[RMDB]
RNA sequence: GGGAACGACUCGAGUAGAGUCGAAAAGAUAUGGAAUCACAGCACGAAGAACACUUCUACCCACCCUCAUAGGAUUCGGAAACGAAUCCUAUGAGGAGGAAGUGGGAGUGCGAUGAUUCCUAAGUCAUCUUUACCUCUGGUUCGCCAGAGGUAAAGAAAAAGAAACAACAACAACAAC
Reactivity to DMS in 0.01 (KOAc 150mM, MgCl2 10mM, bicine 150mM(pH8.5), 24C), signal-to-noise 1, nucleotides 027 to 126: g010a000u010a230u000g000g000a000a050u000c010a000c300a300g060c000a000c000g000a130a240g010a180a150c050a000c000u000u000c000u000a140c140c080c050a300c300c010c010u020c020a000u000a010g000g000a000u000u000c000g000g000a010a050a090c010g030a000a000u000c000c020u000a000u000g020a010g010g020a020g020g000a020a020g000u000g020g020g020a090g010u000g020c000g000a200u000g000a010u000u020c000c000u000a010a120g010u000c060a190